[RMDB]
RNA sequence: GGGAACGACUCGAGUAGAGUCGAAAACUGCCGCCGGGACGCAGUGAUCCUCGCAGGGUCGCACGGUCGCCUCGGGUCGGCCUCGUGUCGGCUCGACCUGCGAGGGGAGCGAGUGGCGAGCCCCACCAAAACUUUCUCGCCUUCGGGCGAGAAAGAAGUAUGUGUAGGGGUUCGCCCCUACACAUACAAAAGAAACAACAACAACAAC
Reactivity to 2A3 in 0.01 (KOAc 150mM, MgCl2 10mM, bicine 150mM(pH8.5), 24C), signal-to-noise 2, nucleotides 027 to 156: c030u090g010c020c000g000c000c010g000g130g210a050c020g000c000a200g170u000g030a000u030c000c000u000c010g000c000a030g000g020g020u210c020g060c070a140c100g220g140u230c090g080c030c020u050c020g050g000g000u010c000g000g060c000c000u100c140g290u300g040u060c000g000g010c010u020c040g030a080c010c010u000g010c000g000a000g000g000g010g000a000g000c000g020a100g090u090g010g000c020g000a070g000c040c000c000c000a070c060c030a080a070a000a140c000u000u000u000c000u000c000g040c010c000u100u070c160g140g060g000c020g000a000g000a000a000a000g000a010a010
The record gives the reactivity of an RNA of 207 nucleotides to 2A3. High 2A3 reactivity points to a flexible backbone, as in loops and unpaired stretches. Conditions: 150 mM KOAc, 10 mM MgCl2 and 150 mM bicine (pH 8.5), 24 C.